[RMDB]
RNA sequence: GGGAACGACUCGAGUAGAGUCGAAAAGGGGUCGCUAGAGAGCUCCUGUAGAGCUUGGAUUUAUGGAGCUGAAGCCUCCACGGCUCCAUUGUCAGCUCUACCUGAGCUCUAUAGCGACGGAGGCACCCAAAGUCGUGCCGAUUCGUCGGCACGACAAGCAUCAUAUUAGGUUCGCCUAAUAUGAUGCAAAAGAAACAACAACAACAAC
Reactivity to 2A3 in 0.01 (KOAc 150mM, MgCl2 10mM, bicine 150mM(pH8.5), 24C), signal-to-noise 3, nucleotides 027 to 156: g070g010g020g010u000c000g000c000u020a010g000a010g000a000g050c010u020c020c100u080g010u000a000g000a000g000c060u140u210g140g000a060u230u300u170a020u100g010g010a000g000c010u020g020a140a020g030c030c020u000c010c010a030c010g010g000c000u000c000c010a000u010u020g030u020c020a010g000c000u000c000u000a000c000c040u030g000a000g000c000u000c000u000a000u000a000g000c000g000a000c000g000g000a000g010g000c030a040c020c010c010a050a060a010g000u000c000g000u000g000c000c000g010a000u030u040c160g060u000c000g060g000c000a000c000g000a000c010a000a010
Reactivity to DMS in 0.01 (KOAc 150mM, MgCl2 10mM, bicine 150mM(pH8.5), 24C), signal-to-noise 1, nucleotides 027 to 156: g000g010g020g020u010c000g060c000u000a030g000a070g020a040g000c010u000c000c100u010g030u000a020g010a010g000c010u010u000g020g000a120u000u000u000a020u010g030g000a010g030c000u000g010a090a150g000c060c010u000c000c010a300c060g010g000c010u000c000c000a010u000u010g020u000c070a090g010c020u000c000u010a010c030c100u010g000a000g010c000u000c020u000a030u000a010g010c030g030a000c050g000g020a020g020g040c020a150c000c010c000a080a090a140g000u000c010g090u000g020c020c000g000a070u000u000c300g020u010c020g000g000c000a020c010g000a000c010a040a120